[RMDB]
RNA sequence: GGGAACGACUCGAGUAGAGUCGAAAAGAGAGACAAUGUGAGAAAGUUGGCCAGGCUGAGAAAGUCCACUUGGACUCAGGCGGGGUCCAAGCCUUGGCCUCAGCUUCCUUCUCUGUCUGGGCGUGGCCGUAAGAGCGUUGUUCGCAACGCUCUUACGAAAAGAAACAACAACAACAAC
Reactivity to 2A3 in 0.01 (KOAc 150mM, MgCl2 10mM, bicine 150mM(pH8.5), 24C), signal-to-noise 1, nucleotides 027 to 126: g050a000g000a000g010a000c020a030a160u120g070u140g090a060g040a030a090a030g040u050u070g000g030c000c030a000g010g030c010u000g000a010g030a050a140a020g060u010c020c000a040c050u030u090g010g000a000c010u020c040a050g150g080c090g010g030g010g000u000c000c010a020a010g000c000c000u030u080g030g000c000c000u000c000a000g000c000u040u020c020c030u050u020c000u010c030u040g030u040c020u000g020g000g070c050g060u070g040g050c070
Reactivity to DMS in 0.01 (KOAc 150mM, MgCl2 10mM, bicine 150mM(pH8.5), 24C), signal-to-noise 4, nucleotides 027 to 126: g010a180g000a060g000a070c060a050a080u000g010u020g000a050g000a070a050a090g010u010u000g010g020c060c130a050g010g020c010u000g000a060g010a090a080a100g010u010c060c150a170c110u020u000g010g010a010c010u000c100a090g010g020c170g030g000g000g000u010c010c030a030a030g000c120c060u000u000g010g020c060c020u000c060a050g010c030u010u000c040c020u010u010c030u000c030u010g000u010c020u000g000g010g010c080g020u010g010g000c110

The data come from the RNA Mapping Database (RMDB), library OK2TRN. This 177-nucleotide RNA was probed chemically with 2A3 and DMS. Reactivities are given for positions 27 through 126. High DMS reactivity at an A or C suggests that its Watson-Crick edge is free. For 2A3, 2,288 sequencing reads were counted. 2A3 adducts were read by reverse transcription with SuperScript II with manganese. DMS adducts were read by reverse transcription with MarathonRT.